[RMDB]
RNA sequence: GGGAACGACUCGAGUAGAGUCGAAAAGUCCGGGACGAAAGUCAGGACAAGGAGGUGUCCACGCCGACGAGUGCUAAGACACAGGAUUUAUCAGCCUUCGAGGCAACGUCAUCCGCAAGCACAGACAGCAUUCACUUAGGUUCGCCUAAGUGAAUGCAAAAGAAACAACAACAACAAC
Reactivity to DMS in 0.01 (KOAc 150mM, MgCl2 10mM, bicine 150mM(pH8.5), 24C), signal-to-noise 4, nucleotides 027 to 126: g000u000c000c020g010g020g020a020c010g040a140a060a170g020u000c000a300g000g030a010c010a120a080g000g010a130g040g000u000g000u000c060c010a080c060g010c070c040g000a240c120g020a110g020u020g020c000u020a080a120g000a160c300a090c070a090g010g000a020u000u010u010a130u020c170a080g000c000c000u000u030c050g000a200g010g000c000a020a030c100g000u000c050a060u020c010c010g000c080a050a100g040c070a050c000a140g010a080c300a050
Reactivity to 2A3 in 0.01 (KOAc 150mM, MgCl2 10mM, bicine 150mM(pH8.5), 24C), signal-to-noise 7, nucleotides 027 to 126: g000u000c020c000g100g300g000a030c030g040a110a030a010g010u020c010a010g000g010a000c010a010a020g100g010a050g030g020u040g020u000c020c030a060c050g020c020c000g060a120c040g070a080g030u090g000c020u080a120a020g060a030c030a000c040a120g040g040a030u070u140u170a170u180c090a010g030c010c000u060u080c100g060a130g010g000c030a010a010c040g040u010c020a030u010c010c010g010c050a050a000g010c010a040c000a060g120a020c040a000